[RMDB]
RNA sequence: GGGAACGACUCGAGUAGAGUCGAAAAGAUAUGGACCACUACCCACCUUACGGAGCCGAAGAACUCGGAAACGAGGGAGGCUCCCGCUAAGAGGUGGUCCUAAGUCAAACUGCCCUUCGGGGCAGAACGUAUUAGGGUGGUUCGCCACCCUAAUACGAAAAGAAACAACAACAACAAC
Reactivity to DMS in 0.01 (KOAc 150mM, MgCl2 10mM, bicine 150mM(pH8.5), 24C), signal-to-noise 3, nucleotides 027 to 126: g010a120u010a150u000g010g000a030c000c010a030c000u000a150c020c010c020a300c130c000u010u000a020c030g000g000a000g030c000c000g020a060a200g000a180a190c010u000c000g000g010a030a070a110c020g000a030g000g000g010a090g010g000c010u000c020c030c070g000c130u010a020a020g000a130g000g000u000g000g000u000c010c000u000a030a050g000u020c150a060a090a160c030u000g000c000c000c000u000u000c220g010g000g020g020c000a000g010a020a100
Structure probing data (DMS) for a 177-nucleotide construct. DMS adducts were read by reverse transcription with MarathonRT. The DMS profile rests on 2,663 reads. The RNA was probed in 150 mM KOAc, 10 mM MgCl2 and 150 mM bicine (pH 8.5) at 24 C.